An RNA of 207 nucleotides, treated with DMS and 2A3 and read out base by base. The reactions ran in a buffer of 150 mM KOAc, 10 mM MgCl2 and 150 mM bicine (pH 8.5), at 24 C. For DMS, 4,262 sequencing reads were counted.
RNA sequence: GGGAACGACUCGAGUAGAGUCGAAAAUGCUGACUUUCCUCAGGGAUCACACCAAUGCACAGUUCAAAUCUCUGGUUGACUUGACAGCAGUGGACGUCCCAACUCGGCAAAACCGUUUUGAGGUCAGUUGGGAGAUCUGAGAAGGUUUUGGGGGUAAACUCCAUGUAUGUUUCGACAUACAUGGAGUAAAAGAAACAACAACAACAAC
Reactivity to DMS in 0.01 (KOAc 150mM, MgCl2 10mM, bicine 150mM(pH8.5), 24C), signal-to-noise 2, nucleotides 027 to 156: u000g020c050u000g030a110c040u000u000u000c020c020u010c040a140g010g030g000a090u010c090a090c090a170c020c000a050a060u010g060c010a090c110a130g000u000u000c040a050a040a040u000c020u000c080u000g050g050u010u000g010a050c020u000u030g010a120c020a220g020c050a050g000u000g000g040a160c070g020u000c010c010c000a050a040c020u000c050g000g000c040a060a070a100a300c050c100g000u010u000u010u010g020a110g010g030u000c000a130g020u010u000g040g030g010a080g000a000u000c030u000g020a120g020a040a060g030g010u000u010u020u000g050g020g020g040g040u000a070a070
Reactivity to 2A3 in 0.01 (KOAc 150mM, MgCl2 10mM, bicine 150mM(pH8.5), 24C), signal-to-noise 4, nucleotides 027 to 156: u120g030c050u080g040a050c020u040u050u030c020c030u030c010a010g020g010g020a060u100c040a050c020a030c090c050a070a060u100g010c050a050c030a130g040u140u060c050a110a090a080u080c090u040c070u200g230g040u070u070g030a050c010u020u050g040a060c020a050g030c000a010g010u030g010g050a070c020g080u010c000c000c000a000a020c040u060c050g040g000c000a050a030a070a170c030c030g060u040u060u110u250g100a060g020g010u000c000a010g000u030u050g000g010g000a040g010a020u020c030u020g040a020g010a070a040g010g000u030u060u100u090g030g010g010g000g010u050a120a090